[RMDB]
The data come from the RNA Mapping Database (RMDB), library OK1LIB. This 177-nucleotide RNA was probed chemically with DMS and 2A3. The RNA was probed in 150 mM KOAc, 10 mM MgCl2 and 150 mM bicine (pH 8.5) at 24 C. DMS adducts were read by reverse transcription with MarathonRT. 2A3 is a SHAPE reagent: it acylates the 2'-hydroxyl of flexible nucleotides of all four kinds. For 2A3 the reverse transcriptase was SuperScript II with manganese.
RNA sequence: GGGAACGACUCGAGUAGAGUCGAAAAAAGGGCUUCACAACCUACCUCUUCAUAGUCUCGGGGCUGCUUGAGCCCCUAUACACCCCAUGGAGUGGCGACAUUGACACUCUGGUAGAGGAGUUGAAGACAUUACUAAUCGUUUCGACGAUUAGUAAUGAAAAGAAACAACAACAACAAC
Reactivity to DMS in 0.01 (KOAc 150mM, MgCl2 10mM, bicine 150mM(pH8.5), 24C), signal-to-noise 9, nucleotides 027 to 126: a080a050g010g000g010c020u000u010c090a070c120a100a150c060c010u010a090c060c010u000c020u010u010c050a070u030a120g010u010c050u010c200g000g000g000g020c010u000g000c260u040u030g000a040g020c000c000c000c000u010a000u010a040c090a170c060c010c020c040a130u040g000g000a010g020u000g010g010c040g020a160c200a110u030u030g000a040c030a010c010u000c010u010g010g010u010a050g000a120g010g010a130g000u000u000g000a050a040g010a140
Reactivity to 2A3 in 0.01 (KOAc 150mM, MgCl2 10mM, bicine 150mM(pH8.5), 24C), signal-to-noise 9, nucleotides 027 to 126: a000a000g100g010g000c040u090u070c060a050c020a080a070c020c010u080a090c020c010u030c010u070u040c050a130u070a180g050u030c030u030c100g000g000g000g010c020u060g030c110u140u090g080a010g000c000c000c000c000u000a000u000a010c020a010c000c030c000c010a060u130g020g000a010g000u010g020g020c030g060a110c080a280u090u230g010a010c000a000c010u010c010u010g060g000u050a040g010a030g030g020a040g010u020u030g030a020a010g020a010